An RNA of 207 nucleotides, treated with 2A3 and read out base by base.
Reactivities are given for positions 27 through 156.
2A3 adducts were read by reverse transcription with SuperScript II with manganese.
RNA sequence: GGGAACGACUCGAGUAGAGUCGAAAAACUGAUACCUUACGAGGUAUCAGAAUGACUUCGUGGUAGAGCGCCACGAACGCAAAAUAAAGAAAGCUCGAUUGAAACGCACCGUGUACGCACGGUGCGAAAAAGUCGAUCCAGUUCGCUGGAUCGACAAGUCGUACAUUUAGUUCGCUAAAUGUACGACAAAAGAAACAACAACAACAAC
Reactivity to 2A3 in 0.01 (KOAc 150mM, MgCl2 10mM, bicine 150mM(pH8.5), 24C), signal-to-noise 2, nucleotides 027 to 156: a010c010u010g000a000u000a000c000c000u040u030a090c300g080a030g000g010u000a000u000c000a000g010a000a020u070g020a040c050u010u000c000g000u000g000g030u000a090g010a000g000c000g000c000c000a000c000g010a000a010c030g060c030a030a040a020a020u060a030a020a030g220a040a030a000g000c020u000c010g120a160u090u210g040a100a060a010c010g000c010a010c000c020g000u010g010u070a030c210g010c070a000c000g000g000u000g000c000g000a000a000a000a000a000g010u010c000g000a000u000c000c000a000g030u080u070c110g060c130u010g000g010a000u000c000g010a000c000a000a010